[RMDB]
RNA sequence: GGGAACGACUCGAGUAGAGUCGAAAAAUCGAGUUUUGGACGAUCACGUUGUCCGCGGCGACCGGCACGCACGUGGAGACGGCCAUCACGUCGCCGAGCAUCCGCGCGCUCACCCGCCGGCCCACGGUCCCUACGCUACCUUCGGGUAGCGUAGGGAAAAAGAAACAACAACAACAAC
Reactivity to 2A3 in 0.01 (KOAc 150mM, MgCl2 10mM, bicine 150mM(pH8.5), 24C), signal-to-noise 1, nucleotides 027 to 126: a000u130c070g020a080g030u000u020u120u140g080g040a060c080g000a050u060c020a020c160g010u020u020g060u090c050c000g020c000g000g030c100g170a240c000c000g000g000c000a000c010g060c000a020c000g000u000g000g010a060g070a000c000g010g030c010c030a150u290c100a060c040g150u150c020g000c000c010g000a060g020c000a200u040c000c000g000c000g000c010g000c050u110c020a080c050c120c000g000c000c010g000g000c020c000c040a010c010g000g020
Reactivity to DMS in 0.01 (KOAc 150mM, MgCl2 10mM, bicine 150mM(pH8.5), 24C), signal-to-noise 1, nucleotides 027 to 126: a150u060c000g000a110g000u010u130u000u040g000g000a260c030g000a000u000c250a050c070g000u070u000g020u040c000c000g000c080g020g000c230g000a240c030c000g000g000c010a020c160g000c010a000c000g040u020g000g000a140g040a070c000g020g000c000c020a160u000c230a120c230g040u000c140g070c000c000g010a140g000c120a270u020c040c000g030c030g000c070g070c000u020c090a060c040c250c120g000c010c000g050g000c030c050c010a030c010g000g010